Chemical mapping of a 177-nucleotide RNA with DMS and 2A3.
Conditions: 150 mM KOAc, 10 mM MgCl2 and 150 mM bicine (pH 8.5), 24 C.
For 2A3, 3,617 sequencing reads were counted.
For DMS the reverse transcriptase was MarathonRT.
RNA sequence: GGGAACGACUCGAGUAGAGUCGAAAAGACCUGCUCAUCGCGUGUCACCUUGCGGGUUGCGGGUACAGCGUCUGCGACACCGCUGACGAAAUUUCCGUGCGGACCAAUGCGAUUACCGAGCACGGCGCACCUUCCCAUUCUUCGGAAUGGGAAGGUGAAAAGAAACAACAACAACAAC
Reactivity to DMS in 0.01 (KOAc 150mM, MgCl2 10mM, bicine 150mM(pH8.5), 24C), signal-to-noise 2, nucleotides 027 to 126: g010a160c010c000u000g000c010u000c040a130u000c010g030c040g030u010g000u010c070a160c090c120u000u060g000c000g000g000g000u000u000g010c020g000g090g030u000a070c220a090g000c240g000u000c010u000g010c000g000a030c100a100c090c030g000c020u030g020a040c060g020a130a070a100u010u000u030c030c000g010u030g000c100g000g000a040c150c120a120a020u010g000c040g000a040u000u020a130c120c030g020a020g000c000a010c070g000g000c130g030
Reactivity to 2A3 in 0.01 (KOAc 150mM, MgCl2 10mM, bicine 150mM(pH8.5), 24C), signal-to-noise 5, nucleotides 027 to 126: g020a040c000c010u010g000c020u010c010a070u060c020g020c050g030u070g070u060c020a060c150c040u010u110g020c010g040g050g000u040u020g020c020g000g010g030u120a130c070a070g100c030g130u040c020u110g010c000g030a030c050a170c090c020g000c010u020g020a050c080g050a060a070a100u090u100u040c000c000g000u000g060c050g040g010a060c010c060a110a090u190g040c040g050a070u070u150a130c040c050g020a030g010c020a010c060g010g000c010g000